[RMDB]
Chemical mapping of a 207-nucleotide RNA with 2A3.

RNA sequence: GGGAACGACUCGAGUAGAGUCGAAAAGACGUGGAGGUUUCGCGCCCUCCUUUGCGCGUAAGUACGUCGAAAUUCGGUGCUUUGGAUCGCACCGUGUGAUCCAUUAGAUAUCCGCUUUGUGCCGCGGUUGGGCAUUUACACUUACCCGAAAGGGGAACGGUCCAUUUAUGUUCGCAUAAAUGGACCGAAAAGAAACAACAACAACAAC
Reactivity to 2A3 in 0.01 (KOAc 150mM, MgCl2 10mM, bicine 150mM(pH8.5), 24C), signal-to-noise 1, nucleotides 027 to 156: g070a020c010g010u090g000g100a090g010g020u050u170u140c020g030c000g040c000c040c040u190c000c090u110u060u000g050c030g020c040g020u000a000a090g100u000a000c030g010u010c030g030a030a030a070u250u070c000g000g000u000g000c000u040u070u150g050g040a010u120c040g000c010a060c150c080g010u080g000u010g000a030u000c000c000a100u090u100a030g090a080u060a070u040c030c000g010c100u140u070u080g010u020g010c010c060g050c010g020g010u130u060g130g030g000c050a000u000u020u160a010c090a000c010u010u160a060c000c030c000g050a060a040a000g070g000g000g000a020a040
The data come from the RNA Mapping Database (RMDB), library OK3TST.